[RMDB]
RNA sequence: GGGAACGACUCGAGUAGAGUCGAAAAUCUGAGGAGUGCGCUGCGCCGCCCAGCCCUGUCGCCCCCCGGAGGUGAUCCCUCCCUCCUGCCGGCCCGCCAGCCUGACCUGUGCUUGGCUCCGCGGGCCCAAGUAAUGAAUCUUCGGAUUCAUUACUUGAAAAGAAACAACAACAACAAC
Reactivity to 2A3 in 0.01 (KOAc 150mM, MgCl2 10mM, bicine 150mM(pH8.5), 24C), signal-to-noise 1, nucleotides 027 to 126: u070c030u040g040a070g060g010a070g060u100g010c060g020c090u050g000c040g010c030c010g050c020c020c000a020g000c000c010c020u070g100u110c040g040c010c000c000c000c010c020g020g000a030g000g050u080g030a080u030c000c000c010u030c010c000c010u020c000c010u030g080c040c000g020g010c030c000c000g000c000c000a010g020c000c000u010g020a060c000c030u110g020u080g040c000u070u050g010g000c000u020c040c010g020c000g000g000g020c010c000
Reactivity to DMS in 0.01 (KOAc 150mM, MgCl2 10mM, bicine 150mM(pH8.5), 24C), signal-to-noise 5, nucleotides 027 to 126: u010c050u000g010a100g010g000a090g020u000g020c060g010c060u000g010c100g010c040c040g000c030c020c030a100g000c040c030c020u000g010u000c050g000c010c010c020c010c020c060g010g000a040g000g000u010g000a110u010c030c010c010u000c020c010c010u000c010c010u000g020c140c100g010g010c010c010c010g020c000c240a030g000c010c010u000g010a060c050c110u010g020u010g020c060u000u010g010g010c000u000c100c160g000c010g010g000g000c010c000